[RMDB]
RNA sequence: GGGAACGACUCGAGUAGAGUCGAAAAUAUGAAAAUCAGACAUACCAGUGCUAACUUAGCCAUUAAGGUGCCUGCAAAUAAAAAAGAAAACAUGAAGUGUAUUGUUUACGACUCUAACUUCACACCGAUAACCCAAGUCUUCAUGCUAAACAGAAGAAGAUUAUCUGGGAUUCGUCCCAGAUAAUCUAAAAGAAACAACAACAACAAC
Reactivity to 2A3 in 0.01 (KOAc 150mM, MgCl2 10mM, bicine 150mM(pH8.5), 24C), signal-to-noise 2, nucleotides 027 to 156: u280a060u080g080a040a000a030a060u110c040a070g040a030c010a040u060a100c040c030a100g000u080g050c040u010a040a120c030u060u110a020g040c000c000a030u060u160a080a070g000g000u030g050c010c040u030g000c040a000a150a100u230a050a200a050a020a010a020g070a030a150a010a010c030a020u100g010a120a070g060u070g010u150a060u090u090g070u060u120u030a030c030g020a010c000u030c010u050a090a150c000u040u040c040a060c030a030c090c040g040a050u070a090a030c010c020c020a030a000g030u010c010u040u020c030a020u050g040c050u220a210a150a040c120a080g130a110a010g070a080
This 207-nucleotide RNA was probed chemically with 2A3.
The 2A3 profile rests on 735 reads.
The reactions ran in a buffer of 150 mM KOAc, 10 mM MgCl2 and 150 mM bicine (pH 8.5), at 24 C.